[RMDB]
RNA sequence: GGGAACGACUCGAGUAGAGUCGAAAAGAUAUGGACCAUGGCAGCUUUUGACGACUACUAUUUCGGAAACGAAAUAGGGUCGAUAAGCUGCAUGGUCCUAAGUCAAACGUCUACUUCGGUAGACGAAUCUAUGGCUAACGUUCGCGUUAGCCAUAGAAAAAGAAACAACAACAACAAC
Reactivity to DMS in 0.01 (KOAc 150mM, MgCl2 10mM, bicine 150mM(pH8.5), 24C), signal-to-noise 3, nucleotides 027 to 126: g010a050u000a300u010g000g000a010c020c010a010u000g030g010c000a000g010c010u000u000u020u000g010a230c150g010a010c010u000a120c010u010a000u010u000u010c000g000g000a110a060a210c000g000a000a000a000u000a010g030g000g000u000c010g030a080u000a010a020g020c000u010g020c010a000u000g020g000u000c000c000u000a000a090g000u000c040a120a100a300c010g010u000c000u000a010c000u000u010c250g000g010u010a010g000a020c000g000a040a050
Reactivity to 2A3 in 0.01 (KOAc 150mM, MgCl2 10mM, bicine 150mM(pH8.5), 24C), signal-to-noise 4, nucleotides 027 to 126: g030a010u070a020u150g020g000a000c000c000a010u050g300g110c000a040g010c020u170u100u230u300g300a280c100g010a010c010u300a300c010u010a300u000u030u020c020g040g030a080a070a080c000g020a000a010a020u010a010g000g000g010u000c000g000a020u020a040a000g020c010u000g010c000a000u000g000g000u010c010c000u000a020a000g010u000c010a050a030a120c010g010u000c000u010a010c010u040u100c300g160g000u020a000g000a020c000g020a010a030
The record gives the reactivity of an RNA of 177 nucleotides to DMS and 2A3. The reactions ran in a buffer of 150 mM KOAc, 10 mM MgCl2 and 150 mM bicine (pH 8.5), at 24 C. The 2A3 profile rests on 5,331 reads. Reactivities are given for positions 27 through 126. The data come from the RNA Mapping Database (RMDB), library TTRDES. 2A3 adducts were read by reverse transcription with SuperScript II with manganese. For DMS, 3,269 sequencing reads were counted.